[RMDB]
RNA sequence: GGGAACGACUCGAGUAGAGUCGAAAAAUGCUAGGAGUCGGCGGCGACCGAAGCGAGGGGGAAAGUAAAGAGAGCAACGGGGCUAGCGAGUGGAUGUUCCGCCUCCCCAGGGUCCCGAGUGAGGCUUGACGCGCGGGCUUCGGCCCGCGCAAAAGAAACAACAACAACAAC
Reactivity to DMS in 0.01 (KOAc 150mM, MgCl2 10mM, bicine 150mM(pH8.5), 24C), signal-to-noise 3, nucleotides 027 to 129: a000u100g010c090u050a110g090g000a060g000u110c020g020g000c110g000g000c200g000a000c060c000g050a170a040g070c050g030a190g000g000g000g000g000a040a020a030g010u090a040a010a040g020a000g110a100g100c070a160a230c070g050g030g010g080c030u010a080g080c020g000a090g000u080g000g000a100u010g040u010u000c110c010g010c040c060u040c000c000c000c040a160g050g000g030u000c050c000c010g000a170g000u000g000a090g040g010c000u000u050g040a030c120